[RMDB]
RNA sequence: GGGAACGACUCGAGUAGAGUCGAAAAUUACUUGCUACUUACAUUACAGAGUGUCUGUAAGGAUGAAAGGCAAUGUGUAUAAUGAUUUAGCAGCUUGCCUGUUACCCACUACGCCUUCUAUAAAUAGGUAUUCUGGUUGUUUCGACAACCAGAAUACAAAAGAAACAACAACAACAAC
Reactivity to 2A3 in 0.01 (KOAc 150mM, MgCl2 10mM, bicine 150mM(pH8.5), 24C), signal-to-noise 3, nucleotides 027 to 126: u010u030a020c020u020u060g020c010u020a060c020u110u020a030c030a110u110u050a040c000a030g090a040g210u180g100u090c010u000g040u020a060a030g080g070a090u080g100a070a070a050g040g000c010a020a050u150g030u010g030u020a050u060a230a140u090g170a060u090u030u150a010g010c010a000g000c020u050u090g030c030c000u010g000u000u030a050c010c020c030a010c030u070a040c030g040c020c030u030u060c030u070a190u060a110a190a110u190a080g080
Reactivity to DMS in 0.01 (KOAc 150mM, MgCl2 10mM, bicine 150mM(pH8.5), 24C), signal-to-noise 3, nucleotides 027 to 126: u000u020a090c060u010u010g010c050u010a120c130u000u000a070c070a070u010u010a030c030a080g010a300g040u000g010u010c120u000g000u000a020a010g010g010a130u000g010a090a050a160g000g000c010a030a010u010g010u010g000u010a070u000a060a090u000g010a170u000u000u000a020g020c030a020g000c040u020u000g040c170c010u010g000u000u000a080c080c030c000a130c170u010a090c120g010c050c080u010u000c040u000a120u010a040a080a100u000a050g010